[RMDB]
RNA sequence: GGGAACGACUCGAGUAGAGUCGAAAAGGAAGAACGCGAAAUGCCCGAUCGACGCCACACCGAUCUGCUCGGGCGCGAUCCGCAGAUGGGUGACCGCGCUGCGCAUGUAAUAGCCGAGCAGACGUUACGCGCAUCAUGAGUUCGCUCAUGAUGCGCGAAAAGAAACAACAACAACAAC
Reactivity to 2A3 in 0.01 (KOAc 150mM, MgCl2 10mM, bicine 150mM(pH8.5), 24C), signal-to-noise 2, nucleotides 027 to 126: g080g030a090a020g010a140a020c120g000c020g090a040a010a100u140g030c020c000c000g010a050u030c030g090a070c050g020c040c000a030c000a030c030c040g050a270u000c010u000g010c040u030c020g060g020g070c000g000c010g010a000u000c030c000g010c030a080g050a180u190g010g010g060u050g040a020c000c060g040c000g000c040u060g000c060g000c040a010u100g050u260a250a080u060a140g000c010c020g000a000g000c000a010g060a000c000g030u000u080a010
Reactivity to DMS in 0.01 (KOAc 150mM, MgCl2 10mM, bicine 150mM(pH8.5), 24C), signal-to-noise 1, nucleotides 027 to 126: g000g000a080a060g000a140a070c090g020c020g030a080a060a040u000g000c000c000c050g000a110u000c010g000a090c060g000c070c070a090c150a200c200c020g040a100u000c020u000g000c040u000c000g000g000g000c000g030c110g000a020u000c070c050g010c110a150g000a100u000g010g020g000u020g010a020c110c040g030c020g040c000u000g000c060g010c060a100u010g030u010a050a150u030a160g010c050c010g010a000g030c010a020g000a020c070g000u000u000a090

This 177-nucleotide RNA was probed chemically with 2A3 and DMS. The reactions ran in a buffer of 150 mM KOAc, 10 mM MgCl2 and 150 mM bicine (pH 8.5), at 24 C. For 2A3, 1,285 sequencing reads were counted. 2A3 adducts were read by reverse transcription with SuperScript II with manganese. It was measured as part of the RMDB library OK2TST. For DMS, 893 sequencing reads were counted.